[RMDB]
RNA sequence: GGGAACGACUCGAGUAGAGUCGAAAAGAUAUGGAGGCUAAGACGCGAGGAUCAGGUCGUAUGGGGUAGAUGGUCGGAAACGACCAUGCGAAUACAUACGACCUGGGAGCGUUAUGCCUCCUAAGUCCUUUAGGUUAUGCUUCGGCAUAACCUAAAGAAAAGAAACAACAACAACAAC
Reactivity to 2A3 in 0.01 (KOAc 150mM, MgCl2 10mM, bicine 150mM(pH8.5), 24C), signal-to-noise 1, nucleotides 027 to 126: g030a010u170a070u300g000g000a000g000g000c010u070a300a190g090a060c060g090c040g090a300g030g050a080u000c000a000g040g020u000c030g000u010a000u000g060g020g030g010u050a050g020a080u000g020g020u010c030g000g010a100a040a040c000g000a030c000c010a000u030g000c000g000a080a000u030a020c000a000u020a000c080g000a000c010c020u010g010g000g000a000g000c010g000u040u000a020u110g000c030c000u000c000c020u000a010a010g010u040c000
Reactivity to DMS in 0.01 (KOAc 150mM, MgCl2 10mM, bicine 150mM(pH8.5), 24C), signal-to-noise 2, nucleotides 027 to 126: g020a100u010a300u010g000g020a020g000g030c000u020a160a300g000a030c010g030c000g030a100g030g010a050u010c020a010g010g030u000c010g000u010a000u000g000g000g010g030u000a180g010a020u000g010g000u010c030g000g010a090a150a300c000g000a020c000c000a000u000g000c000g010a120a170u100a020c010a020u000a010c000g030a000c000c000u000g000g000g000a020g020c010g000u000u000a250u010g000c020c000u000c000c000u000a040a090g010u000c030
An RNA of 177 nucleotides, treated with 2A3 and DMS and read out base by base. 2A3 adducts were read by reverse transcription with SuperScript II with manganese. The data come from the RNA Mapping Database (RMDB), library TTRINS. Values cover nucleotides 27 to 126. DMS adducts were read by reverse transcription with MarathonRT. The reactions ran in a buffer of 150 mM KOAc, 10 mM MgCl2 and 150 mM bicine (pH 8.5), at 24 C.